[RMDB]
RNA sequence: GGGAACGACUCGAGUAGAGUCGAAAAUGUCCUCUGGGGACUCAGCUUGCUCUGGCUGCUGGAUUGAAUUAGCUGCAGGACCAAGAUGAGCCCUUGGUGGAGAAAAACGAGCAUGUUCGCAUGCUCGGAUACCACAGUAGUUCGCUACUGUGGUAUCAAAAGAAACAACAACAACAAC
Reactivity to DMS in 0.01 (KOAc 150mM, MgCl2 10mM, bicine 150mM(pH8.5), 24C), signal-to-noise 8, nucleotides 027 to 126: u010g010u000c000c000u000c010u000g000g010g010g010a020c010u000c010a000g000c000u000u000g000c300u000c000u010g000g020c010u000g010c010u000g010g010a100u010u010g010a030a300u010u000a030g010c000u000g000c020a150g010g010a020c080c000a010a010g000a030u000g000a020g010c010c020c000u000u000g000g010u000g010g010a050g000a050a080a050a110a210c000g000a010g010c000a010u000g000u000u010c200g020c010a010u000g000c000u000c000g010
Reactivity to 2A3 in 0.01 (KOAc 150mM, MgCl2 10mM, bicine 150mM(pH8.5), 24C), signal-to-noise 7, nucleotides 027 to 126: u110g040u020c010c010u000c010u010g000g000g020g080a130c000u000c010a010g000c000u000u020g010c010u000c000u030g110g010c010u010g000c010u030g050g100a170u070u270g120a160a190u120u050a070g010c010u030g000c010a020g010g020a020c030c010a000a000g000a010u000g000a000g000c020c000c000u000u040g010g000u020g010g030a070g040a030a120a030a000a020c010g000a000g000c000a000u010g010u070u090c210g000c090a000u000g020c000u000c000g000